[RMDB]
RNA sequence: GGGAACGACUCGAGUAGAGUCGAAAAAAAUUUCUAUCUGUCAGAAUAGAAUAUGCACCUUUACCGUUACAUAAUUUUGCAAUGACAGUGCUGUUUAUGUUAGCAUUGACUCUAAUAUAAGCAGUGAAAUAUUGUUUGGUUUAGCCUCUAGCCUAGCCGCAGGUAGGUUAUUCGUAACCUACCUGCGAAAAGAAACAACAACAACAAC
Reactivity to 2A3 in 0.01 (KOAc 150mM, MgCl2 10mM, bicine 150mM(pH8.5), 24C), signal-to-noise 2, nucleotides 027 to 156: a000a000a000u100u100u030c010u020a120u010c030u030g110u030c040a010g000a250a090u050a040g030a040a000u090a070u080g020c010a030c000c000u080u150u160a100c090c050g030u010u120a060c020a060u030a160a170u140u080u100u100g030c040a060a110u080g010a010c010a010g030u010g050c000u000g000u010u020u010a010u010g030u000u000a040g020c180a290u020u230g010a120c040u000c000u140a010a000u000a010u000a010a000g000c000a000g040u000g070a000a020a000u090a020u040u130g080u010u000u060g030g030u120u010u040a030g010c020c000u030c100u120a010g030c020c050u100a050g090c020

Structure probing data (2A3) for a 207-nucleotide construct. Source: RMDB library OK3TST, as collected in RNAgym. The RNA was probed in 150 mM KOAc, 10 mM MgCl2 and 150 mM bicine (pH 8.5) at 24 C. High 2A3 reactivity points to a flexible backbone, as in loops and unpaired stretches.